[RMDB]
RNA sequence: GGGAACGACUCGAGUAGAGUCGAAAAGAUAUGGACCGGAGUAGCUCUUGGAUUUAUAGUGAUCUUAUAUCGGAAACGAUAUAAGUAGCUAUUGUCAGAGCUAUGACGGUCCUAAGUCAAAGUCAUUCUUACACUCUUCGGAGUGUAAGAAUGACAACGAUAUCUGCCCGUUCGCGGGCAGAUAUCGAAAAGAAACAACAACAACAAC
Reactivity to 2A3 in 0.01 (KOAc 150mM, MgCl2 10mM, bicine 150mM(pH8.5), 24C), signal-to-noise 1, nucleotides 027 to 156: g030a000u080a030u130g000g000a000c010c010g000g000a030g020u000a000g010c010u010c040u080u230g250g030a120u220u300u050a010u030a010g040u050g100a200u160c000u000u000a000u000a000u000c010g050g000a070a090a040c020g000a000u010a000u000a000a000g000u000a000g010c010u000a000u020u000g000u020c010a000g000a000g000c000u000a010u010g000a000c010g000g000u000c000c000u000a010a010g050u000c020a120a030a000g020u000c010a000u000u000c000u000u000a000c000a000c000u000c020u020u100c300g130g000a000g020u000g000u000a000a000g010a000a000u000g000a010c000a000a000